Structure probing data (DMS and 2A3) for a 207-nucleotide construct. It was measured as part of the RMDB library M2RFPK. For DMS, 1,732 sequencing reads were counted.

RNA sequence: GGGAACGACUCGAGUAGAGUCGAAAAGACGUAAUCCGCGCAAAUCCACAACCGCCAACGAUGAGCGUUUCGCUGUAGCCGCUUAAGGCAACAGCCGGGGCCGCCUGAGCCCUGUUACCAAAGACGGGAAACUCGAUGCCAUUCGUGGCAUCGAGAAACUAACAGAGCGAUUCGUCGCUCUGUUAGUAAAAGAAACAACAACAACAAC
Reactivity to DMS in 0.01 (KOAc 150mM, MgCl2 10mM, bicine 150mM(pH8.5), 24C), signal-to-noise 1, nucleotides 027 to 156: g000a040c040g010u010a120a070u010c030c050g010c050g070c050a140a150a080u020c030c030a050c040a030a120c000c020g000c020c020a040a110c060g000a090u010g010a150g050c010g000u010u010u000c010g060c010u000g010u010a100g040c060c000g000c190u010u130a070a160g000g030c010a040a020c020a000g000c020c040g000g000g000g050c030c030g000c100c090u010g010a080g030c010c040c020u000g020u000u000a080c110c040a050a090a150g000a100c070g000g000g000a070a070a070c080u000c000g010a000u000g020c010c000a120u010u000c290g000u000g010g030c000a000u000c020g010a010g000a030a010
Reactivity to 2A3 in 0.01 (KOAc 150mM, MgCl2 10mM, bicine 150mM(pH8.5), 24C), signal-to-noise 4, nucleotides 027 to 156: g030a000c010g020u030a050a020u050c040c010g000c020g020c080a090a030a080u110c100c040a110c040a110a090c010c060g030c030c050a090a050c060g080a060u090g010a030g120c030g020u050u090u140c040g000c000u010g020u030a050g000c000c010g100c180u260u240a150a080g000g000c000a020a000c000a010g010c000c010g000g000g000g010c000c040g030c010c010u020g010a000g000c000c000c010u010g030u040u100a020c020c030a010a010a020g110a040c030g000g000g050a050a030a040c000u010c000g000a000u000g000c000c000a030u060u030c170g070u040g020g000c000a000u000c000g000a000g000a000a000
For 2A3 the reverse transcriptase was SuperScript II with manganese.